[RMDB]
RNA sequence: GGGAACGACUCGAGUAGAGUCGAAAAGAGGAGGGGGCCGUUACACUGUCAGAGAUGUAGUCUGAGGGUCUCACAGUGAACCGGUCUCUUUUCCUGCUGAAAAGCCUGUGUUCUUCGGAACACAGGCCGCACUAGAAGUGUUCGCACUUCUAGUGCGAAAAGAAACAACAACAACAAC
Reactivity to DMS in 0.01 (KOAc 150mM, MgCl2 10mM, bicine 150mM(pH8.5), 24C), signal-to-noise 1, nucleotides 027 to 126: g030a040g000g000a020g000g010g040g000g000c030c000g000u000u000a200c030a020c000u000g010u000c280a150g000a030g000a030u000g000u000a150g000u000c080u000g010a220g020g000g000u000c000u000c000a080c000a010g000u000g000a040a090c300c020g010g010u000c010u010c000u000u000u010u010c000c000u010g010c080u000g000a090a150a090a130g010c000c000u000g010u000g010u000u010c010u000u000c230g020g010a010a030c000a000c000a010g010g020c000

Structure probing data (DMS) for a 177-nucleotide construct. For DMS, 1,002 sequencing reads were counted. The data come from the RNA Mapping Database (RMDB), library RFMREP. The RNA was probed in 150 mM KOAc, 10 mM MgCl2 and 150 mM bicine (pH 8.5) at 24 C.